About this RNA: Chemical mapping of a 177-nucleotide RNA with 2A3. Conditions: 150 mM KOAc, 10 mM MgCl2 and 150 mM bicine (pH 8.5), 24 C. Values cover nucleotides 27 to 126. For 2A3 the reverse transcriptase was SuperScript II with manganese. It was measured as part of the RMDB library M2PK90.
[RMDB]
RNA sequence: GGGAACGACUCGAGUAGAGUCGAAAAUGAACGUGCGUACAUCUCUCUCAGACUGUACGACAGUCUGACUCUCUCGCACUCUAGUUCCACGAGAGAGAGAGAGCGUUGGAACUAGGGUGAUAUGAAAGCAAGUAGCGCAUUUCGAUGCGCUACUUGCAAAAGAAACAACAACAACAAC
Reactivity to 2A3 in 0.01 (KOAc 150mM, MgCl2 10mM, bicine 150mM(pH8.5), 24C), signal-to-noise 1, nucleotides 027 to 126: u180g030a070a020c100g070u130g060c020g030u130a000c030a130u020c050u000c000u010c000u000c060a050g040a080c070u010g000u070a040c020g050a020c050a010g040u000c020u030g010a080c020u040c000u030c010u000c060g020c000a000c000u000c000u000a000g030u010u020c010c000a010c000g070a070g010a030g000a000g010a040g050a000g040a000g000c040g090u120u090g010g000a000a000c000u010a000g000g010g010u020g000a040u080a070u220g120a090a050a010